[RMDB]
The data come from the RNA Mapping Database (RMDB), library OK1LIB. Structure probing data (2A3) for a 177-nucleotide construct. Conditions: 150 mM KOAc, 10 mM MgCl2 and 150 mM bicine (pH 8.5), 24 C. For 2A3, 317 sequencing reads were counted.

RNA sequence: GGGAACGACUCGAGUAGAGUCGAAAAGACAUUUGGUAAGAGUGUUGUGCUACUAGGGAAGCGAGCAGUCUUUCGGCGGCAUUGCGUUUACCACCCAUCCACUGGUCGCUAAAUUUUAAAACACUUACGGACGUACUAGGUUCGCCUAGUACGUCCGAAAAGAAACAACAACAACAAC
Reactivity to 2A3 in 0.01 (KOAc 150mM, MgCl2 10mM, bicine 150mM(pH8.5), 24C), signal-to-noise 1, nucleotides 027 to 126: g230a000c090a090u030u080u210g050g000u010a070a000g040a010g060u050g030u070u060g060u070g030c010u040a000c000u060a040g130g000g060a160a000g020c020g000a020g070c010a060g110u000c080u120u110u040c150g000g040c170g000g000c020a030u000u080g030c010g030u000u060u110a070c030c000a060c000c000c000a020u130c030c040a060c160u100g020g000u100c000g030c070u020a120a200a300u200u240u130u280a020a070a000a000c130a050c070u000u120a000